[RMDB]
Conditions: 150 mM KOAc, 10 mM MgCl2 and 150 mM bicine (pH 8.5), 24 C. The record gives the reactivity of an RNA of 177 nucleotides to DMS and 2A3. For 2A3 the reverse transcriptase was SuperScript II with manganese. Values are in units of 0.01, from 0 to 300, in steps of 10. The DMS profile rests on 5,307 reads. Reactivities are given for positions 27 through 126.
RNA sequence: GGGAACGACUCGAGUAGAGUCGAAAAGAUAUGGAGUCAUCUACGUCUCGAAGAACUCUCUCGGAAACGAGAGAGGGAGAGGUGUAGAGUGACUCCUAAGUCAAACGGGACAGUUCGCUGUCCCGAACCCAAAUAUUAUCUUCGGAUAAUAUUUGGGAAAAGAAACAACAACAACAAC
Reactivity to DMS in 0.01 (KOAc 150mM, MgCl2 10mM, bicine 150mM(pH8.5), 24C), signal-to-noise 4, nucleotides 027 to 126: g010a030u010a300u000g000g000a030g010u010c010a060u000c000u010a010c010g010u000c010u000c000g000a090a170g000a140a240c000u000c000u010c000u000c000g010g000a110a120a210c000g000a020g000a010g000a010g010g000g000a060g000a020g000g000u000g010u000a000g000a040g010u000g020a010c000u000c000c000u000a000a090g000u000c050a070a100a250c020g010g000g000a020c000a010g010u000u020c250g010c010u000g000u000c000c010c010g000a010a080
Reactivity to 2A3 in 0.01 (KOAc 150mM, MgCl2 10mM, bicine 150mM(pH8.5), 24C), signal-to-noise 4, nucleotides 027 to 126: g040a030u080a070u260g000g000a010g010u000c000a020u010c010u010a000c020g060u010c020u010c010g300a300a070g010a050a030c000u000c000u000c010u020c000g010g030a130a080a060c000g000a000g020a000g000a000g010g000g000a010g010a000g010g010u010g000u010a010g020a010g010u020g000a010c000u000c000c000u000a010a000g040u010c020a010a040a090c020g030g010g010a000c000a000g010u090u140c270g110c160u020g010u010c060c010c000g000a010a000